[RMDB]
RNA sequence: GGGAACGACUCGAGUAGAGUCGAAAAGAUAUGGACUGUGAAUCGAUAAGAGGAACUCGGAAACGAGUUUCCUCUUUUGACGAUUACACAGUCCUAAGUCAAAGGGUGCCAGUUCGCUGGCACCCAAGGCUUAUAAGCAGUUCGCUGCUUAUAAGCCAAAAGAAACAACAACAACAAC
Reactivity to DMS in 0.01 (KOAc 150mM, MgCl2 10mM, bicine 150mM(pH8.5), 24C), signal-to-noise 1, nucleotides 027 to 126: g020a020u000a300u010g010g010a020c000u000g010u000g000a070a010u000c000g030a300u010a000a010g030a010g010g000a040a000c000u000c000g010g010a060a060a160c000g000a040g010u000u020u000c000c010u030c000u000u010u010u020g000a220c150g000a010u010u010a090c000a040c020a030g030u000c000c000u000a000a050g000u000c020a140a130a190g020g000g000u000g000c020c020a030g010u000u000c270g000c000u020g010g020c000a000c010c010c000a000a000